Conditions: 150 mM KOAc, 10 mM MgCl2 and 150 mM bicine (pH 8.5), 24 C. The record gives the reactivity of an RNA of 177 nucleotides to 2A3 and DMS. DMS adducts were read by reverse transcription with MarathonRT. Values cover nucleotides 27 to 126.
[RMDB]
RNA sequence: GGGAACGACUCGAGUAGAGUCGAAAAUUCUCGAGGACCACCUCUUCGUCGGUGAGGAGACAGGCGGCGAUACAGGGGAGUGCUGCGUUCUUGUUCCCCUUGGCGAGGAUGGUGCCUUUGAGCGGGAGGAUGCAGUAAUAUUCGUAUUACUGCAUCCAAAAGAAACAACAACAACAAC
Reactivity to 2A3 in 0.01 (KOAc 150mM, MgCl2 10mM, bicine 150mM(pH8.5), 24C), signal-to-noise 9, nucleotides 027 to 126: u070u000c010u010c010g010a010g020g020a050c170c020a000c010c000u010c000u010u010c010g020u010c020g020g120u110g040a180g050g020a070g020a010c020a010g060g030c030g020g000c030g040a050u100a250c110a130g010g050g020g030a050g060u120g000c020u020g010c020g100u140u040c040u070u060g030u040u040c010c010c000c020u040u190g000g000c000g000a000g020g010a040u160g000g000u020g020c000c000u030u050u180g030a030g020c080g030g020g020a060
Reactivity to DMS in 0.01 (KOAc 150mM, MgCl2 10mM, bicine 150mM(pH8.5), 24C), signal-to-noise 6, nucleotides 027 to 126: u010u010c000u000c000g010a030g010g000a100c180c020a020c010c010u000c010u010u000c010g030u000c010g010g000u000g010a080g010g010a070g010a040c040a050g010g010c070g000g010c010g000a110u010a120c130a170g000g000g000g010a250g020u000g010c020u000g000c040g010u010u000c040u000u000g000u000u000c010c010c000c040u000u010g010g000c010g000a030g010g000a030u010g020g010u000g000c030c000u000u000u010g000a040g020c230g000g010g000a300